[RMDB]
RNA sequence: GGGAACGACUCGAGUAGAGUCGAAAAGAUAUGGACGGCAUACUUCGACGAUCUAUGGUCGGAAACGACCAUAGGGAGAAGUUAUGGCCGUCCUAAGUCAAAAGACACGCAACUUCGGUUGCGUGUCCGUUAUCGAGUUGUUCGCAACUCGAUAACGAAAAGAAACAACAACAACAAC
Reactivity to DMS in 0.01 (KOAc 150mM, MgCl2 10mM, bicine 150mM(pH8.5), 24C), signal-to-noise 3, nucleotides 027 to 126: g000a010u000a160u000g010g010a020c000g010g020c010a100u010a020c020u000u000c000g010a110c290g000a020u010c000u000a000u000g010g020u010c000g010g000a030a030a060c010g020a020c000c000a000u000a000g000g000g000a010g000a020a010g010u000u010a020u010g020g010c010c000g010u000c010c000u000a000a080g000u000c020a120a120a140a140g010a020c000a010c000g000c000a000a010c000u000u010c270g030g010u000u000g000c000g020u000g000u000c000
Reactivity to 2A3 in 0.01 (KOAc 150mM, MgCl2 10mM, bicine 150mM(pH8.5), 24C), signal-to-noise 3, nucleotides 027 to 126: g000a020u020a010u070g000g010a000c010g010g020c000a040u030a130c010u010u010c010g300a300c010g000a110u010c000u000a000u000g000g000u000c000g020g000a020a020a010c000g010a010c020c000a010u000a000g000g000g000a020g010a000a000g010u110u110a130u190g110g000c010c000g010u000c000c000u000a000a000g000u000c000a020a020a030a060g000a000c000a000c000g010c000a000a000c010u090u160c300g150g030u020u000g000c000g000u000g010u000c010